This 177-nucleotide RNA was probed chemically with DMS and 2A3.
RNA sequence: GGGAACGACUCGAGUAGAGUCGAAAAGAGAAAAAGAAAAGGACCACUCCUGCGGGAGUUAAGGCUCUACGGACAGCCGGGUCCACUGCCGAAAAAGAAAAAGAAAAAGAAAAAGAAAAAGAAAGAACAUAAUAUGCCCUUUCGAGGGCAUAUUAUGAAAAGAAACAACAACAACAAC
Reactivity to DMS in 0.01 (KOAc 150mM, MgCl2 10mM, bicine 150mM(pH8.5), 24C), signal-to-noise 2, nucleotides 027 to 126: g000a300g000a100a060a060a060a050g010a140a120a120a070g000g010a010c010c080a090c000u000c000c000u020g020c170g000g030g000a010g030u010u070a050a120g010g010c000u000c140u070a010c000g000g030a100c080a060g010c000c000g000g010g020u020c000c000a020c160u020g010c030c010g000a100a100a050a130a080g000a050a030a000a080a120g000a010a060a020a060a110g030a100a060a030a010a070g000a060a090a040a070a100g040a080a050a140g000a080a210
Reactivity to 2A3 in 0.01 (KOAc 150mM, MgCl2 10mM, bicine 150mM(pH8.5), 24C), signal-to-noise 1, nucleotides 027 to 126: g070a000g030a000a210a000a040a000g210a020a050a010a040g020g000a000c010c000a030c000u000c010c000u060g010c270g080g000g000a020g000u010u100a010a020g000g000c000u030c080u070a020c070g040g070a090c070a000g000c000c000g010g030g010u010c030c000a000c020u030g040c000c000g050a070a030a070a000a000g090a000a100a050a060a000g090a040a070a030a040a000g020a050a060a000a060a050g050a030a020a010a000a010g160a010a130a030g030a080a000

About this RNA
For 2A3 the reverse transcriptase was SuperScript II with manganese. The RNA was probed in 150 mM KOAc, 10 mM MgCl2 and 150 mM bicine (pH 8.5) at 24 C. The data come from the RNA Mapping Database (RMDB), library OK1LIB. For 2A3, 512 sequencing reads were counted. In probing experiments dimethyl sulfate is read out at A N1 and C N3, which are open when not base-paired.